[RMDB]
This 177-nucleotide RNA was probed chemically with DMS and 2A3. DMS adducts were read by reverse transcription with MarathonRT. Conditions: 150 mM KOAc, 10 mM MgCl2 and 150 mM bicine (pH 8.5), 24 C. For 2A3 the reverse transcriptase was SuperScript II with manganese. The 2A3 profile rests on 2,657 reads.
RNA sequence: GGGAACGACUCGAGUAGAGUCGAAAAGUCGAGAGGCAGCUUGGGAUCUGGAAAAGAUGGAGGCCACGCCGGGCUACCAGGACAUCAGCGCUCUGGAAAAAUCGGUGAGCUUAUCGACCAGGCAAACUAAUCCGGUACCUUUCGAGGUACCGGAUUAAAAAGAAACAACAACAACAAC
Reactivity to DMS in 0.01 (KOAc 150mM, MgCl2 10mM, bicine 150mM(pH8.5), 24C), signal-to-noise 3, nucleotides 027 to 126: g030u030c050g020a050g010a140g000g000c020a150g010c050u000u000g000g000g010a070u010c000u000g010g030a100a140a120a030g000a040u020g000g010a120g010g000c040c100a130c070g020c030c000g000g010g010c050u020a150c050c020a060g000g020a070c050a060u030c210a060g020c160g010c040u030c000u000g000g000a020a080a030a080a120u020c050g020g000u030g000a220g000c060u000u030a030u010c040g000a060c020c020a060g000g030c130a130a090a080c210
Reactivity to 2A3 in 0.01 (KOAc 150mM, MgCl2 10mM, bicine 150mM(pH8.5), 24C), signal-to-noise 3, nucleotides 027 to 126: g060u040c070g010a010g030a020g130g040c020a050g030c050u050u030g030g010g050a100u010c010u050g120g060a100a060a110a050g040a030u140g070g020a050g010g030c030c030a060c020g010c000c000g000g000g000c020u050a110c000c010a020g030g000a020c020a050u230c090a060g070c020g030c110u010c020u040g010g010a120a050a000a020a060u060c000g030g010u050g050a050g020c000u050u080a030u120c010g000a020c000c000a030g050g000c100a100a110a000c060